Notes:
The record gives the reactivity of an RNA of 177 nucleotides to 2A3 and DMS. Values cover nucleotides 27 to 126. High 2A3 reactivity points to a flexible backbone, as in loops and unpaired stretches. The RNA was probed in 150 mM KOAc, 10 mM MgCl2 and 150 mM bicine (pH 8.5) at 24 C. 2A3 adducts were read by reverse transcription with SuperScript II with manganese.

[RMDB]
RNA sequence: GGGAACGACUCGAGUAGAGUCGAAAAGGUGUGCGGGGUAAGCCUGUGCACCGUGAGGGAGACAACCCAGAGUUAGGUUAAGGUCCCAAAGUGCGAGCUAAGUGCGAUUGAAGGUGGUCUCGAGCCCCUAUAUUCUGAUGUUCGCAUCAGAAUAUAGAAAAGAAACAACAACAACAAC
Reactivity to 2A3 in 0.01 (KOAc 150mM, MgCl2 10mM, bicine 150mM(pH8.5), 24C), signal-to-noise 9, nucleotides 027 to 126: g010g000u010g000u010g010c010g000g010g010g080u220a090a100g300c000c000u020g000u010g000c000a000c000c000g000u050g020a060g000g080g000a050g000a040c050a050a030c050c010c030a040g030a020g140u190u240a050g000g040u040u060a090a030g040g030u030c010c010c000a020a080a000g070u100g020c020g010a040g010c030u090a110a020g040u050g100c030g050a100u010u130g050a080a030g040g020u040g010g010u020c010u010c020g020a030g010c000c000c000
Reactivity to DMS in 0.01 (KOAc 150mM, MgCl2 10mM, bicine 150mM(pH8.5), 24C), signal-to-noise 9, nucleotides 027 to 126: g010g020u000g020u000g010c010g010g010g000g010u030a120a170g010c000c000u000g020u000g010c000a010c000c000g010u010g000a150g010g010g000a070g010a080c090a060a060c030c010c040a140g010a120g010u010u010a080g010g010u010u010a090a110g010g000u000c010c010c020a060a080a100g010u010g010c050g000a080g000c050u010a070a090g010u010g010c050g000a100u010u010g000a110a110g000g010u000g000g000u000c020u000c040g010a120g000c010c010c020